[RMDB]
RNA sequence: GGGAACGACUCGAGUAGAGUCGAAAAUUAGCACAAAUUGAUUUUGUCUGAGACAUGUGGGGCUACAUUUCUUAGCGACUCAUCCAUUCUACUAGAUGCUCUGUGGUUUAGGAUUUUCUAUCCAUUGCACAACCUUUGGUUUCGACCAAAGGUUGUGAAAAGAAACAACAACAACAAC
Reactivity to DMS in 0.01 (KOAc 150mM, MgCl2 10mM, bicine 150mM(pH8.5), 24C), signal-to-noise 2, nucleotides 027 to 126: u010u010a070g000c080a070c090a040a060a080u010u010g010a090u010u010u020u000g010u010c040u010g030a070g010a050c070a040u000g000u000g000g030g040g010c050u020a060c070a030u000u000u000c040u000u020a100g020c070g010a050c100u000c030a050u000c040c030a050u000u000c030u010a070c090u010a080g010a080u000g000c060u010c040u010g020u000g020g030u000u000u000a080g020g010a090u000u000u010u000c060u010a110u000c030c020a120u010u000g020
Reactivity to 2A3 in 0.01 (KOAc 150mM, MgCl2 10mM, bicine 150mM(pH8.5), 24C), signal-to-noise 1, nucleotides 027 to 126: u030u020a000g080c060a000c010a010a060a000u090u150g060a040u020u090u040u110g050u100c000u070g030a010g000a000c030a050u020g030u010g040g070g210g000c030u100a020c040a070u050u030u070c000u020u000a020g010c010g030a030c000u030c040a040u000c020c010a000u070u070c020u110a090c010u020a040g030a130u090g000c030u040c030u080g020u000g030g070u070u000u110a020g000g000a060u040u080u000u000c020u030a060u000c020c010a060u100u180g020
Chemical mapping of a 177-nucleotide RNA with DMS and 2A3. Reactivities are given for positions 27 through 126. For 2A3 the reverse transcriptase was SuperScript II with manganese. The DMS profile rests on 2,544 reads.